RNA sequence: GGGAACGACUCGAGUAGAGUCGAAAAUGGAUGAAGACACACAGUAAGACAAUACCGCUGAAGGAAACUGGAGAGCUGCUUGAACUGUGAAACUGGAAGGGUCAAGUGCGUAAUGCUGCUUGUAAAACCAGAAUUUGUAAUUCGUUACAAAUUCUGGAAAAGAAACAACAACAACAAC
Reactivity to 2A3 in 0.01 (KOAc 150mM, MgCl2 10mM, bicine 150mM(pH8.5), 24C), signal-to-noise 4, nucleotides 027 to 126: u090g040g010a020u060g050a060a010g050a010c010a000c010a000c010a080g030u060a060a010g070a030c040a090a120u050a110c000c030g040c070u040g040a050a030g030g040a100a090a050c040u050g030g020a060g020a020g020c030u040g020c010u020u050g050a050a030c020u010g000u030g080a090a040a010c050u060g030g060a060a030g070g000g000u040c020a030a020g000u020g040c020g040u050a050a020u140g000c020u020g010c010u030u050g080u120a080a070a010a000
Reactivity to DMS in 0.01 (KOAc 150mM, MgCl2 10mM, bicine 150mM(pH8.5), 24C), signal-to-noise 6, nucleotides 027 to 126: u010g010g000a070u000g010a090a060g010a080c070a090c040a100c070a050g010u010a070a080g010a090c100a080a110u000a100c040c050g000c040u000g010a130a090g000g010a050a070a110c060u000g010g000a080g010a090g020c050u000g010c060u000u000g010a060a070c080u000g020u000g010a050a070a060c070u000g010g000a060a080g000g010g010u000c040a040a050g020u000g010c040g010u010a070a090u010g010c040u010g010c030u000u000g010u000a050a050a120a120